[RMDB]
RNA sequence: GGGAACGACUCGAGUAGAGUCGAAAAUAACAAAAACAAACACGCGAACCUGGCAAAGGCCGCAGAGCCAGGAGCGUGAUAAACGCAGAAAGAUCUGCGGCCAAAAGCGAGAAGAACUCGCAACAAAGCCUCUGUACGAGUUCGCUCGUGCAGAGGCAAAAGAAACAACAACAACAAC
Reactivity to 2A3 in 0.01 (KOAc 150mM, MgCl2 10mM, bicine 150mM(pH8.5), 24C), signal-to-noise 3, nucleotides 027 to 126: u160a040a020c150a070a090a070a060a030c080a030a160a000c000a000c000g030c000g000a090a080c000c000u000g000g040c020a090a300a300g020g000c010c000g000c000a010g000a000g000c000c000a000g000g000a000g000c010g000u000g020a000u100a050a140a010c160g030c120a070g160a130a120a000g080a030u010c000u000g000c000g000g000c000c000a030a100a000a000g000c040g000a000g030a210a030g010a060a060c000u000c000g050c000a000a000c060a010a100a010
Reactivity to DMS in 0.01 (KOAc 150mM, MgCl2 10mM, bicine 150mM(pH8.5), 24C), signal-to-noise 1, nucleotides 027 to 126: u050a150a290c070a100a040a060a150a090c130a040a120a110c020a000c020g010c000g000a300a120c000c000u010g000g020c020a110a020a200g000g000c010c050g000c040a020g000a000g010c010c010a000g040g000a010g000c010g060u010g010a010u030a040a050a060c100g000c170a020g070a070a120a100g020a000u000c000u000g000c000g010g010c000c000a080a020a060a080g000c000g000a050g000a060a100g110a080a120c000u000c000g000c000a080a020c080a110a090a140